[RMDB]
RNA sequence: GGGAACGACUCGAGUAGAGUCGAAAAUGGUAGUGGACCGCUGGGGCCCUGUGCGAAAGCUGGGCCUCACGGGCCGUAAUGUUGGCAGGCACAGCGUUAGGCUGGCUUCACAGAGCAGCGAGAACUGCCCGCUUCCAACGGUGGAAGGAUAACGGGCCUAAUAACCUCUGUUCGCAGAGGUUAUUAGAAAAGAAACAACAACAACAAC
Reactivity to DMS in 0.01 (KOAc 150mM, MgCl2 10mM, bicine 150mM(pH8.5), 24C), signal-to-noise 2, nucleotides 027 to 156: u000g030g000u000a090g020u010g000g010a010c020c000g010c100u000g020g010g020g040c010c000c000u000g030u000g030c030g010a210a140a300g010c020u000g000g040g010c010c010u000c000a020c010g020g030g000c010c020g000u010a050a100u010g030u010u010g010g000c000a100g030g020c050a050c050a030g000c020g020u010u010a090g020g020c040u000g010g030c030u020u000c060a100c100a120g000a050g020c010a070g010c030g030a240g000a060a080c030u000g000c010c000c000g000c030u000u000c010c010a050a200c090g000g020u000g020g030a110a290g010g000a050u020a050a100c030g000g020g030c040
Reactivity to 2A3 in 0.01 (KOAc 150mM, MgCl2 10mM, bicine 150mM(pH8.5), 24C), signal-to-noise 2, nucleotides 027 to 156: u050g040g030u070a090g080u100g070g040a040c030c040g010c230u010g010g010g000g000c000c010c060u110g110u090g060c030g060a140a010a000g030c020u030g010g000g000c020c000u010c000a000c000g000g000g000c010c000g000u020a010a040u120g030u120u120g040g000c070a010g010g000c020a010c020a170g030c040g080u080u030a090g040g060c000u010g040g000c020u050u040c060a080c020a030g010a000g020c040a010g060c010g030a020g040a060a040c070u040g000c010c020c000g000c000u000u000c010c000a080a140c170g120g060u060g080g020a030a020g000g000a020u080a140a010c030g000g010g010c000
Chemical mapping of a 207-nucleotide RNA with DMS and 2A3. 2A3 adducts were read by reverse transcription with SuperScript II with manganese. In probing experiments dimethyl sulfate is read out at A N1 and C N3, which are open when not base-paired. For DMS, 5,361 sequencing reads were counted. Conditions: 150 mM KOAc, 10 mM MgCl2 and 150 mM bicine (pH 8.5), 24 C. DMS adducts were read by reverse transcription with MarathonRT. It was measured as part of the RMDB library ARCHII. Values cover nucleotides 27 to 156.